[RMDB]
RNA sequence: GGGAACGACUCGAGUAGAGUCGAAAAGUCACUCAGUCUGUGUGAGACACUGAGUGACACACAGAGAGAGACUGACUGACACUCACUCUGUCACACUGAGUCAGAGAGUCUGUGACACUGUGUCAGAAAGCACGGAAGAGUUCGCUCUUCCGUGCUUAAAAGAAACAACAACAACAAC
Reactivity to DMS in 0.01 (KOAc 150mM, MgCl2 10mM, bicine 150mM(pH8.5), 24C), signal-to-noise 2, nucleotides 027 to 126: g020u010c020a020c000u000c000a030g010u000c100u000g020u010g010u010g010a190g010a130c130a080c050u000g000a050g010u000g000a040c000a040c140a030c020a050g000a100g000a110g000a090g000a080c060u010g000a180c010u000g000a070c060a090c050u000c060a100c070u000c120u010g000u020c110a040c060a100c180u000g020a050g020u010c050a140g010a090g000a130g000u020c040u000g010u000g000a090c080a060c120u000g000u000g010u000c030a050g000a060
Reactivity to 2A3 in 0.01 (KOAc 150mM, MgCl2 10mM, bicine 150mM(pH8.5), 24C), signal-to-noise 1, nucleotides 027 to 126: g030u010c000a000c010u040c000a000g040u000c050u120g070u030g060u060g170a080g040a040c050a030c090u080g030a000g040u010g010a020c000a010c000a000c000a010g110a000g000a000g000a020g020a010c020u050g030a020c000u010g000a000c010a000c040u080c000a060c020u070c070u020g050u020c030a000c000a040c120u110g010a030g140u120c080a020g090a000g000a020g230u060c040u060g050u050g010a000c000a010c050u030g020u020g010u010c000a010g160a090